This 207-nucleotide RNA was probed chemically with DMS and 2A3. High DMS reactivity at an A or C suggests that its Watson-Crick edge is free. The reactions ran in a buffer of 150 mM KOAc, 10 mM MgCl2 and 150 mM bicine (pH 8.5), at 24 C. It was measured as part of the RMDB library M2RFPK.
[RMDB]
RNA sequence: GGGAACGACUCGAGUAGAGUCGAAAACAAUGCAGGUUAAGCCAAAGGGAUGUCCCGACCGGAGGCCGACAAUCCAGGGAACCGGAUGUCACCACGUUGUUGCAGUACCAGAUGGCAUCUUAAAUCCAAAAGAACACAUAGUUCGCUAUGUGUUCAACAUCCAGUUUAUGUUCGCAUAAACUGGAUGAAAAGAAACAACAACAACAAC
Reactivity to DMS in 0.01 (KOAc 150mM, MgCl2 10mM, bicine 150mM(pH8.5), 24C), signal-to-noise 2, nucleotides 027 to 156: c060a120a140u000g000c070a080g040g010u000u000a140a150g020c000c040a060a300a260g000g010g020a040u000g000u010c020c020c000g000a270c000c000g040g030a300g010g000c010c010g010a060c020a060a120u020c030c020a100g010g000g020a120a140c020c090g010g030a050u020g000u000c010a050c010c000a130c230g010u010u020g000u000u000g020c000a050g060u000a060c040c040a120g000a070u000g000g020c000a040u000c050u000u000a030a040a130u000c030c010a070a060a070a170g000a020a040c000a000c000a030u000a000g030u000u000c300g090c000u000a000u000g010u010g030u030u000c010a030a140
Reactivity to 2A3 in 0.01 (KOAc 150mM, MgCl2 10mM, bicine 150mM(pH8.5), 24C), signal-to-noise 3, nucleotides 027 to 156: c050a030a120u170g050c060a060g120g050u110u120a070a020g020c020c010a040a000a000g030g010g000a020u060g030u050c000c000c000g010a010c000c020g000g000a010g000g000c010c000g000a010c020a110a090u050c050c050a030g010g080g060a070a040c040c010g000g000a010u010g010u020c000a010c030c020a040c090g020u010u010g000u030u040g010c070a060g040u070a050c040c000a030g010a140u050g010g000c010a010u010c020u040u090a080a120a060u070c020c010a040a060a010a020g010a010a000c000a000c000a010u010a000g030u060u060c120g040c120u000a000u000g000u000g010u010u000c010a000a000